[RMDB]
RNA sequence: GGGAACGACUCGAGUAGAGUCGAAAAAGAGAUGGAGUGUCUGAGGGUCAACUCUUCAAUGUGCUCCAAUAUGAGCUCCGCGCAAUUCGUGAAGCUUGUGUGAUGCUUGAGAGUGGAUACCAGCCAGCAUGGGCUAUCCAUUCGUGGAUAGCCCAUGAAAAGAAACAACAACAACAAC
Reactivity to 2A3 in 0.01 (KOAc 150mM, MgCl2 10mM, bicine 150mM(pH8.5), 24C), signal-to-noise 6, nucleotides 027 to 126: a000g150a010g020a030u150g050g040a090g050u140g090u080c030u030g040a130g010g000g020u040c020a010a060c030u020c000u260u130c060a060a090u210g040u070g120c030u040c070c020a010a000u110a050u070g010a000g000c000u000c040c000g000c000g000c040a050a270u290u240c020g000u040g040a040a000g000c000u030u010g020u000g020u050g060a060u100g010c010u030u040g010a020g000a000g020u010g020g000a020u080a270c010c010a030g060c030c010a000g040
Reactivity to DMS in 0.01 (KOAc 150mM, MgCl2 10mM, bicine 150mM(pH8.5), 24C), signal-to-noise 5, nucleotides 027 to 126: a080g020a060g010a120u010g000g000a160g000u010g020u010c020u000g010a170g010g010g010u010c070a060a030c030u020c020u030u030c030a020a030u020g030u020g000c060u010c060c050a090a070u020a040u010g010a000g020c010u000c050c010g010c010g020c300a150a170u020u050c020g030u000g010a060a000g000c010u000u030g020u000g010u010g000a060u030g010c010u000u000g010a020g000a040g020u000g010g000a040u010a080c050c000a060g000c060c050a110g000